[RMDB]
An RNA of 177 nucleotides, treated with 2A3 and DMS and read out base by base. Values are in units of 0.01, from 0 to 300, in steps of 10. For 2A3, 12,508 sequencing reads were counted. The DMS profile rests on 3,955 reads. It was measured as part of the RMDB library RFMREP. The reactions ran in a buffer of 150 mM KOAc, 10 mM MgCl2 and 150 mM bicine (pH 8.5), at 24 C.
RNA sequence: GGGAACGACUCGAGUAGAGUCGAAAAUCCUCCUGUCCUUCAUUCCACCGGAGUCUGUCUUAUGCCAACCAGAUUUCAGUGGAGUGAAGCUCAGGAGGCAAAAGUGAUUGCCGUUCGCGGCAAUCACGGUAGAUAAACCGUUCGCGGUUUAUCUACCAAAAGAAACAACAACAACAAC
Reactivity to 2A3 in 0.01 (KOAc 150mM, MgCl2 10mM, bicine 150mM(pH8.5), 24C), signal-to-noise 4, nucleotides 027 to 126: u030c000c000u000c000c000u010g000u010c010c000u000u010c000a010u010u000c000c010a010c000c000g000g000a010g010u000c010u020g080u010c050u150u300a220u270g160c050c030a030a030c020c010a010g000a000u000u040u000c000a000g000u000g000g000a000g000u000g000a000a000g000c000u000c000a000g000g030a010g010g000c010a090a110a040a040g000u000g000a000u010u000g010c020c010g020u040u080c300g010c010g060g000c000a000a000u010c000a000c000
Reactivity to DMS in 0.01 (KOAc 150mM, MgCl2 10mM, bicine 150mM(pH8.5), 24C), signal-to-noise 3, nucleotides 027 to 126: u010c000c000u000c000c000u000g010u000c210c010u000u010c000a010u000u000c000c010a010c000c030g000g000a010g010u000c000u000g000u010c070u000u010a110u010g020c300c170a060a080c140c000a010g000a020u000u000u000c000a030g020u000g000g000a010g020u000g010a010a000g020c060u000c010a010g000g000a020g000g010c300a010a040a080a110g020u010g000a010u000u000g010c000c000g030u000u000c220g010c020g020g000c000a000a000u000c010a000c000